Background
Structure probing data (2A3 and DMS) for a 207-nucleotide construct. Source: RMDB library M2RFPK, as collected in RNAgym.
[RMDB]
RNA sequence: GGGAACGACUCGAGUAGAGUCGAAAAGGACUGCGCAGUCCGGCAACAUCAGCAGAGAGCCCGCUAUACGUGACGGAUUGGCGGAAGCGUACAGAAAUAUUGAGCCUCCUGCAAGAGGCAGCCAAGCAAAACGUACGUGAGUUCGCUCACGUACGAACAUUGUAGAAGAGUUCGCUCUUCUACAAUGAAAAGAAACAACAACAACAAC
Reactivity to 2A3 in 0.01 (KOAc 150mM, MgCl2 10mM, bicine 150mM(pH8.5), 24C), signal-to-noise 7, nucleotides 027 to 156: g030g010a030c040u060g040c170g050c130a030g020u000c020c000g020g020c010a040a050c010a130u160c030a020g030c040a000g080a010g010a020g100c010c020c010g020c030u060a040u020a110c040g030u050g070a020c030g050g060a100u070u060g050g020c000g000g010a030a020g000c000g020u040a030c020a040g130a070a120a010u280a080u170u170g040a030g010c010c000u010c010c030u100g050c030a050a040g000a010g020g010c000a010g010c010c010a040a010g030c050a020a080a040a030c010g000u000a000c000g000u000g000a000g010u060u140c170g020c100u000c000a000c000g000u000a000c000g000a010a000
Reactivity to DMS in 0.01 (KOAc 150mM, MgCl2 10mM, bicine 150mM(pH8.5), 24C), signal-to-noise 3, nucleotides 027 to 156: g020g020a080c020u000g020c090g040c100a110g010u010c010c010g040g030c040a090a090c030a100u000c050a140g000c040a110g020a140g000a090g010c020c010c010g010c050u010a070u000a050c050g020u000g000a270c010g010g010a180u000u010g030g000c000g020g000a090a260g010c020g010u010a150c040a070g000a110a090a120u000a170u000u000g000a140g000c020c000u000c010c020u000g010c100a160a120g000a090g010g020c000a050g070c020c010a050a100g030c080a070a040a090a170c000g000u000a010c000g030u000g030a030g030u010u000c300g010c010u000c000a010c000g010u000a000c010g010a010a060